[RMDB]
RNA sequence: GGGAACGACUCGAGUAGAGUCGAAAAGCGAAAGUUGCCAUGAGACCGUAACUUUCGUAGUCAUCGAUAAAGGGGCAGGUCUCGCUCUUUUGUCAUUGCGGUUGCCUAGAGGCAUGGUCGUUUACCGAAAAGAGCUCAUUCUUCGGAAUGAGCUCAAGAGUGAAUAUGGGUUCGCCCAUAUUCACUCAAAAGAAACAACAACAACAAC
Reactivity to 2A3 in 0.01 (KOAc 150mM, MgCl2 10mM, bicine 150mM(pH8.5), 24C), signal-to-noise 3, nucleotides 027 to 156: g010c010g000a000a000a000g010u020u010g010c040c020a090u130g110a040g030a150c060c010g000u010a000a010c010u010u010u010c000g010u020a000g040u020c040a040u060c070g010a020u020a040a020a000g010g010g020g000c070a040g010g180u050c070u040c050g000c000u000c000u000u060u010u030g040u020c030a030u000u220g060c040g100g000u060u060g010c010c020u120a080g020a130g060g000c040a040u090g020g000u010c020g000u020u030u070a240c020c010g020a050a070a010a020g010a010g010c000u000c000a000u000u000c010u020u050c090g030g000a000a000u010g000a000g090c000u000c000a000a000
Reactivity to DMS in 0.01 (KOAc 150mM, MgCl2 10mM, bicine 150mM(pH8.5), 24C), signal-to-noise 1, nucleotides 027 to 156: g020c000g000a030a040a000g000u000u010g000c020c040a220u030g010a130g000a040c050c090g000u000a030a010c010u000u010u000c030g040u000a030g020u000c080a130u020c030g010a080u000a000a050a010g000g010g020g020c090a090g060g000u000c060u010c060g030c010u010c020u000u020u020u000g020u020c030a300u000u000g020c020g000g030u000u000g040c010c050u030a110g020a250g020g000c200a070u000g010g020u000c050g010u000u000u000a070c000c020g010a080a070a130a150g020a020g000c000u020c000a020u000u000c010u000u000c300g030g010a000a000u000g000a020g040c010u000c000a010a020

Conditions: 150 mM KOAc, 10 mM MgCl2 and 150 mM bicine (pH 8.5), 24 C. An RNA of 207 nucleotides, treated with 2A3 and DMS and read out base by base. For DMS the reverse transcriptase was MarathonRT.